[RMDB]
Source: RMDB library VIROID, as collected in RNAgym. Structure probing data (DMS and 2A3) for a 177-nucleotide construct. For DMS, 634 sequencing reads were counted.
RNA sequence: GGGAACGACUCGAGUAGAGUCGAAAAUCUUUAGCGCCUAGCUUAACCUGCAGAAGUUCACAUAAAAAGUGCCACUCUGGGGAAUACACUACGUGCCUUACCUGUAUGGUGGCAAGGGCUCGAAGAGGUCUAUAUGGGGGUUCGCCCCCAUAUAGACAAAAGAAACAACAACAACAAC
Reactivity to DMS in 0.01 (KOAc 150mM, MgCl2 10mM, bicine 150mM(pH8.5), 24C), signal-to-noise 2, nucleotides 027 to 126: u000c020u010u000u000a130g050c110g020c030c020u000a110g040c050u000u010a140a030c010c010u000g000c040a050g000a040a080g000u000u000c080a000c020a200u020a140a040a090a110a140g020u010g000c070c010a100c110u020c130u000g000g000g020g030a200a060u000a120c030a030c010u000a090c140g000u050g010c300c030u000u000a070c180c000u010g040u000a030u000g070g000u010g000g000c010a070a080g010g000g000c010u020c040g030a030a030g000a050g040
Reactivity to 2A3 in 0.01 (KOAc 150mM, MgCl2 10mM, bicine 150mM(pH8.5), 24C), signal-to-noise 2, nucleotides 027 to 126: u020c000u030u070u070a050g000c060g100c030c010u000a000g000c030u120u090a030a020c000c010u030g000c010a010g000a110a000g050u260u250c010a000c010a020u250a050a250a020a020a030g010u010g030c030c000a060c030u260c170u150g000g050g020g050a040a000u150a090c010a010c020u030a020c040g000u020g010c000c010u030u110a140c050c000u020g000u090a060u270g030g030u000g000g000c000a040a130g040g000g010c000u020c030g020a030a030g030a000g110